[RMDB]
Conditions: 150 mM KOAc, 10 mM MgCl2 and 150 mM bicine (pH 8.5), 24 C.
This 177-nucleotide RNA was probed chemically with 2A3 and DMS.
The DMS profile rests on 2,782 reads.
The 2A3 profile rests on 2,456 reads.
RNA sequence: GGGAACGACUCGAGUAGAGUCGAAAACUCGUGACAAUCGACGAUGCAUUUAACUAUCACAGACAGAACGAGCUCUUUGUGCAGAUACGAGCUGAUGACACGUUGGGAGAGCCGUAUAAUACCAACACCAUAAGAUGCUCUUCGGAGCAUCUUAUGGAAAAGAAACAACAACAACAAC
Reactivity to 2A3 in 0.01 (KOAc 150mM, MgCl2 10mM, bicine 150mM(pH8.5), 24C), signal-to-noise 3, nucleotides 027 to 126: c010u010c000g050u040g030a050c050a080a090u120c080g020a030c030g050a060u040g050c030a040u090u140u080a130a100c040u080a020u110c020a050c030a040g120a090c010a030g080a040a000c030g030a050g040c010u010c000u060u040u120g070u030g060c040a020g020a070u080a110c050g020a040g000c040u040g000a030u050g030a030c020a010c120g040u040u050g020g010g010a100g000a020g060c000c000g020u070a080u010a160a070u050a080c000c020a030a020c020a050
Reactivity to DMS in 0.01 (KOAc 150mM, MgCl2 10mM, bicine 150mM(pH8.5), 24C), signal-to-noise 4, nucleotides 027 to 126: c050u000c020g000u010g030a100c220a080a110u000c040g020a060c100g000a070u000g010c100a050u000u010u020a060a090c080u010a080u020c050a090c120a100g000a080c070a100g010a110a080c060g010a080g010c040u010c030u000u000u000g010u000g010c090a060g000a090u000a040c090g000a060g010c040u010g000a070u000g000a080c100a020c080g010u000u010g020g020g010a100g000a090g000c030c030g020u000a070u000a070a080u000a090c020c040a020a050c130a220